[RMDB]
RNA sequence: GGGAACGACUCGAGUAGAGUCGAAAAGAUAUGGAGUCCAGGAGCCACAUGUCGGAAACGACAUUUGGCGCGAAACUGGCUCCUAAGUCAAAACACCAAACAAGUGGUUCGCCACUUGUUUGGUGAAGAUAUAGCAUUCCUUCGGGAAUGCUAUAUCAAAAGAAACAACAACAACAAC
Reactivity to 2A3 in 0.01 (KOAc 150mM, MgCl2 10mM, bicine 150mM(pH8.5), 24C), signal-to-noise 3, nucleotides 027 to 126: g010a000u060a040u160g000g000a000g030u100c020c010a000g050g020a030g010c020c000a010c010a010u010g010u010c000g030g030a110a050a050c010g010a000c000a000u010u010u010g000g000c000g000c010g110a100a080a080c000u000g000g000c010u010c000c000u020a160a010g020u000c020a020a030a070a130c010a010c020c000a000a000a010c000a000a000g010u000g080g070u070u120c300g090c110c000a010c000u000u010g010u000u000u010g010g000u000g010a000a000
Reactivity to DMS in 0.01 (KOAc 150mM, MgCl2 10mM, bicine 150mM(pH8.5), 24C), signal-to-noise 4, nucleotides 027 to 126: g010a050u000a300u000g010g010a000g000u020c000c010a010g000g010a190g000c000c000a000c030a010u000g010u010c000g010g000a130a070a190c000g010a000c010a000u000u000u000g000g000c000g020c170g010a050a100a230c020u000g000g000c020u010c000c000u000a020a060g000u000c010a100a080a140a230c010a000c010c000a000a000a010c000a010a010g010u000g010g010u000u010c250g000c010c000a000c000u000u000g000u000u000u000g000g010u000g000a010a050
Structure probing data (2A3 and DMS) for a 177-nucleotide construct. Reactivities are given for positions 27 through 126. 2A3 adducts were read by reverse transcription with SuperScript II with manganese. 2A3 is a SHAPE reagent: it acylates the 2'-hydroxyl of flexible nucleotides of all four kinds.